[RMDB]
RNA sequence: GGGAACGACUCGAGUAGAGUCGAAAAGCAGAAAAAGGAACAGAAAGCCUGAUUGGCUCCUUCCUCAUUAAAGUCGCCUAUCAAAGCUCUGUAAUUACCAGCGCCAUGUUUCUGACUGCUAUGGCUGUCACGUAACGAGAUUCGUCUCGUUACGUGAAAAAGAAACAACAACAACAAC
Reactivity to DMS in 0.01 (KOAc 150mM, MgCl2 10mM, bicine 150mM(pH8.5), 24C), signal-to-noise 4, nucleotides 027 to 126: g010c010a020g000a020a070a100a190a120g000g010a090a040c050a060g000a110a090a110g020c020c080u010g000a090u010u010g020g000c010u000c080c030u000u000c090c100u010c200a110u010u010a070a030a060g000u010c110g000c000c020u000a030u000c030a040a090a140g000c010u000c020u020g020u010a060a070u000u010a080c060c030a060g010c150g010c020c030a060u000g010u000u010u000c010u000g000a120c030u000g010c020u000a100u000g010g000c050u010g010
Reactivity to 2A3 in 0.01 (KOAc 150mM, MgCl2 10mM, bicine 150mM(pH8.5), 24C), signal-to-noise 2, nucleotides 027 to 126: g000c000a020g160a080a030a040a050a040g070g000a030a020c000a030g110a100a070a000g000c030c030u030g040a100u040u070g030g010c010u030c000c000u020u020c010c030u110c040a130u150u280a020a030a000g030u020c020g000c010c010u050a050u070c030a100a000a010g030c010u000c010u000g090u100a100a150u110u080a060c040c040a050g010c020g010c050c010a050u050g030u000u040u020c050u020g090a070c040u050g000c010u030a040u050g060g000c010u020g040
Structure probing data (DMS and 2A3) for a 177-nucleotide construct. Conditions: 150 mM KOAc, 10 mM MgCl2 and 150 mM bicine (pH 8.5), 24 C. For 2A3 the reverse transcriptase was SuperScript II with manganese.